[RMDB]
Structure probing data (2A3) for a 207-nucleotide construct.
RNA sequence: GGGAACGACUCGAGUAGAGUCGAAAAAACAGAAUUCACAGUGCCAAGGAGUCAAAAACUAUAUUUCAAAUUAUAUACAUUCCUGACAUAUUAUUUGAGCAGAUUAAAACUGAUGGAUAGAGCAAUUUAGGCACCUUGAAAGUAGCUACUUGAAAAAUAAUGCGUUUUAUUUCGAUAAAACGCAUUAAAAAGAAACAACAACAACAAC
Reactivity to 2A3 in 0.01 (KOAc 150mM, MgCl2 10mM, bicine 150mM(pH8.5), 24C), signal-to-noise 1, nucleotides 027 to 156: a000a060c040a040g130a000a040u070u040c020a050c000a060g050u000g060c000c000a000a000g000g010a040g040u000c020a000a060a090a250a290c130u170a300u000a080u220u050u050c000a010a010a010u060u000a030u010a070u000a150c000a070u000u140c000c020u120g000a020c040a040u050a040u060u010a030u080u020u000g000a020g030c040a020g020a080u030u170a020a030a150a200c000u020g020a140u170g090g000a020u110a020g070a000g100c020a020a040u140u040u000a060g000g000c040a030c020c000u060u050g030a230a060a110g060u060a020g070c060u150a010c040u130u140g160a070a070a190a000a000
Reactivities are given for positions 27 through 156.
The reactions ran in a buffer of 150 mM KOAc, 10 mM MgCl2 and 150 mM bicine (pH 8.5), at 24 C.